[RMDB]
An RNA of 177 nucleotides, treated with 2A3 and DMS and read out base by base. 2A3 adducts were read by reverse transcription with SuperScript II with manganese. The 2A3 profile rests on 1,967 reads. The data come from the RNA Mapping Database (RMDB), library OK2TST. High DMS reactivity at an A or C suggests that its Watson-Crick edge is free. The RNA was probed in 150 mM KOAc, 10 mM MgCl2 and 150 mM bicine (pH 8.5) at 24 C.
RNA sequence: GGGAACGACUCGAGUAGAGUCGAAAAGAAGGAUGGGAUGGUAAAGAACUUCUAUGUUCCUAGACUCAAAAAUCCUUUGAUAUCGGGUGUUAGAAUAGUUCAAUACAGUACAGGAGCUCACUACAAAAGGUAAAAUGGUAUUCGUACCAUUUUACCUAAAAGAAACAACAACAACAAC
Reactivity to 2A3 in 0.01 (KOAc 150mM, MgCl2 10mM, bicine 150mM(pH8.5), 24C), signal-to-noise 2, nucleotides 027 to 126: g050a020a000g000g010a010u020g040g010g020a080u060g050g000u070a060a080a030g030a050a020c000u130u010c080u160a100u230g070u070u020c000c000u010a030g080a040c040u050c100a000a040a000a030a080u110c010c000u000u040u040g080a090u070a030u050c030g030g020g010u060g060u160u030a030g030a130a100u030a100g030u030u020c010a030a050u060a090c020a040g050u040a060c020a050g020g010a020g000c010u020c040a030c020u140a060c050a000a120a140
Reactivity to DMS in 0.01 (KOAc 150mM, MgCl2 10mM, bicine 150mM(pH8.5), 24C), signal-to-noise 6, nucleotides 027 to 126: g010a070a050g000g010a080u010g010g000g000a180u020g010g010u000a060a140a200g000a030a030c010u000u010c120u000a050u010g020u010u010c010c010u000a130g010a190c170u020c040a020a060a070a150a070u000c050c040u010u010u000g000a060u000a140u000c040g010g000g000u000g000u000u010a040g010a040a070u010a040g030u010u000c070a040a150u000a050c060a050g020u010a050c100a070g000g010a080g010c040u000c060a060c070u010a060c180a050a060a100